[RMDB]
RNA sequence: GGGAACGACUCGAGUAGAGUCGAAAACUGUUCUACAUGGCUGGGAAGGCCUCACAAUUAUGGCAGAAGAUGAAGGAAGAGUAAAGGGUUGUCUUACAUGGCAGCACGCAAGAGAGCAUGUGUAGGGACUGUGCUAAUCGUUCGCGAUUAGCACAGUAAAAGAAACAACAACAACAAC
Reactivity to 2A3 in 0.01 (KOAc 150mM, MgCl2 10mM, bicine 150mM(pH8.5), 24C), signal-to-noise 2, nucleotides 027 to 126: c020u020g060u040u010c010u000a140c010a130u060g030g000c020u030g080g020g080a100a000g090g010c000c000u030c000a070c050a020a140u170u080a040u160g040g000c040a000g010a150a000g100a090u150g040a070a030g110g000a050a000g050a010g050u130a050a080a040g080g100g000u070u030g030u040c010u030u110a120c060a040u100g020g010c020a010g010c010a030c040g050c000a030a030g050a000g000a010g060c030a070u080g020u030g040u030a040g010g030g000
Reactivity to DMS in 0.01 (KOAc 150mM, MgCl2 10mM, bicine 150mM(pH8.5), 24C), signal-to-noise 4, nucleotides 027 to 126: c070u010g030u000u000c020u000a120c090a120u010g010g000c090u010g000g020g010a090a090g020g010c010c010u000c100a070c110a080a110u010u020a080u010g020g010c070a040g010a070a040g010a130u000g010a110a100g010g000a060a060g020a070g010u010a070a090a090g010g010g010u000u000g000u000c040u000u020a100c160a060u010g010g020c070a040g020c040a040c070g030c060a080a050g010a120g000a070g000c080a050u000g000u000g010u000a050g010g010g010